[RMDB]
RNA sequence: GGGAACGACUCGAGUAGAGUCGAAAAAGUUAAGGUACAUAGGCAGCUGAACAUCCUCAAAAGAUUCGAGAAUUCGCUCACAUAUUUCAGCGGGGGCGCUAUGUAUGCAAGGGUGAUUGCAGUAUGCCCAUUAAUUUAGCUUCGGCUAAAUUAAUGGAAAAGAAACAACAACAACAAC
Reactivity to DMS in 0.01 (KOAc 150mM, MgCl2 10mM, bicine 150mM(pH8.5), 24C), signal-to-noise 5, nucleotides 027 to 126: a090g030u010u020a110a150g000g010u010a040c070a060u020a040g000g000c040a080g000c010u000g000a030a090c200a050u000c030c020u020c180a090a060a080a150g000a080u050u010c140g000a110g010a080a080u030u020c050g020c250u000c070a100c080a070u020a100u020u000u010c120a060g010c050g000g010g020g020g000c050g000c060u000a000u020g010u000a030u010g010c110a060a050g000g000g000u010g010a120u000u010g020c020a020g000u010a040u010g010c160
Reactivity to 2A3 in 0.01 (KOAc 150mM, MgCl2 10mM, bicine 150mM(pH8.5), 24C), signal-to-noise 8, nucleotides 027 to 126: a000g150u150u110a110a030g090g020u060a020c010a020u030a040g060g020c000a010g030c040u020g010a020a020c020a090u050c010c010u080c070a060a060a020a080g100a110u120u130c070g030a010g040a100a140u150u050c040g020c050u050c020a090c020a040u170a090u070u180u080c040a030g000c010g030g020g020g020g020c030g000c080u030a030u070g020u020a030u040g060c030a030a020g010g000g030u060g040a140u020u110g000c000a010g050u080a150u160g030c030